An RNA of 177 nucleotides, treated with DMS and read out base by base. Reactivities are given for positions 27 through 126. For DMS the reverse transcriptase was MarathonRT.
[RMDB]
RNA sequence: GGGAACGACUCGAGUAGAGUCGAAAAGAUAUGGAAUAGCAAGAGCGAUAAGCCUGAGGUCGGAAACGACCUACAGGCUUUUGACGCUCGACUUAUUCCUAAGUCAAACUUCUCGUUCGCGAGAAGAUCUCGUGAUCAUGUUCGCAUGAUCACGAGAAAAAGAAACAACAACAACAAC
Reactivity to DMS in 0.01 (KOAc 150mM, MgCl2 10mM, bicine 150mM(pH8.5), 24C), signal-to-noise 1, nucleotides 027 to 126: g030a000u010a300u010g000g000a040a000u010a000g000c100a100a290g000a030g020c000g030a210u000a010a010g020c000c000u000g050a050g020g000u000c000g000g010a070a040a180c010g000a010c000c000u010a040c000a000g010g030c000u000u000u000u040g000a070c110g000c000u000c000g000a240c290u000u010a000u000u000c000c000u020a050a150g000u000c040a170a080a230c010u000u010c000u000c010g000u000u000c240g050c010g000a020g000a000a010g010a070
The reactions ran in a buffer of 150 mM KOAc, 10 mM MgCl2 and 150 mM bicine (pH 8.5), at 24 C.